[RMDB]
RNA sequence: GGGAACGACUCGAGUAGAGUCGAAAAAACGCUCUCCCGACCGCUCGGAUGGGCCGCUUCCGGCAAGAGGGGCCGAAAGUGUGAAGGGAGAGACCGCUCCGAGAGUUGGGAGAAGAAAGAGAGCGAAGUAGGUUGGUGUUCGCACCAACCAAAAGAAACAACAACAACAAC
Reactivity to DMS in 0.01 (KOAc 150mM, MgCl2 10mM, bicine 150mM(pH8.5), 24C), signal-to-noise 3, nucleotides 027 to 129: a020a000c160g010c060u000c010u020c020c060c030g030a080c020c070g020c010u040c010g010g060a000u040g000g000g050c080c030g060c000u010u000c030c030g000g000c090a120a020g020a080g050g010g020g090c010c010g010a050a020a020g000u070g040u120g000a160a080g040g010g020a070g000a040g010a040c020c040g030c110u040c000c000g020a010g000a180g030u070u040g020g060g030a120g040a000a050g030a100a050a080g020a080g010a040g010c040g010a070a020g040u040a110
Reactivity to 2A3 in 0.01 (KOAc 150mM, MgCl2 10mM, bicine 150mM(pH8.5), 24C), signal-to-noise 4, nucleotides 027 to 129: a000a000c080g000c020u000c000u000c000c000c000g010a030c010c040g170c070u020c000g050g010a040u050g080g050g000c010c010g060c010u010u000c010c000g000g010c010a070a040g090a070g100g070g060g000c000c000g040a020a010a000g060u060g000u070g190a110a100g060g070g000a020g000a000g010a020c010c010g070c090u000c010c000g010a010g000a000g030u040u040g000g000g000a020g000a050a000g010a000a020a000g130a020g010a020g000c030g030a030a060g090u140a040